[RMDB]
RNA sequence: GGGAACGACUCGAGUAGAGUCGAAAAGCCGUGGCUGGGUGGGCGAUGAGUUCACGACAGACGACUUUGAUUCUCGCCCCGACCCUUGGGGCUCCCUGCUCUGGACUUGCUACGGAGGCAAGAGCAGCCAGGAGCUUCUGGAGCGUGCCCGCUUUGCUAACCGAAUGGAAUUCGUUCCAUUCGGUUAAAAAGAAACAACAACAACAAC
Reactivity to 2A3 in 0.01 (KOAc 150mM, MgCl2 10mM, bicine 150mM(pH8.5), 24C), signal-to-noise 2, nucleotides 027 to 156: g030c010c000g000u040g030g040c060u050g010g040g030u060g010g000g000c000g030a050u240g020a030g110u070u080c040a030c070g100a050c010a080g160a070c060g030a060c090u110u050u140g030a000u060u030c050u010c010g000c050c000c020c030g110a090c020c030c020u040u110g000g000g000g000c000u060c010c000c000u000g000c020u000c000u030g030g240a170c030u070u040g040c050u180a190c220g180g040a080g030g000c030a010a030g010a010g010c010a010g030c040c020a020g000g010a010g010c020u070u020c010u040g070g010a050g020c040g020u060g030c020c000c020g040c040u110u060u040g100c120
Reactivity to DMS in 0.01 (KOAc 150mM, MgCl2 10mM, bicine 150mM(pH8.5), 24C), signal-to-noise 1, nucleotides 027 to 156: g030c040c030g000u000g020g000c030u000g010g020g000u000g000g000g000c020g030a100u010g000a230g010u000u000c080a100c010g030a300c060a110g030a110c080g030a070c030u000u000u000g000a190u000u000c010u010c010g020c000c010c000c030g030a070c020c020c010u020u000g020g010g000g000c010u000c030c020c020u000g030c000u000c000u000g000g000a030c020u000u000g000c050u010a230c300g030g000a050g000g000c010a090a060g010a050g030c020a030g020c100c120a170g050g000a060g030c010u010u000c050u000g010g000a040g000c000g020u000g010c020c010c010g010c020u000u000u000g010c050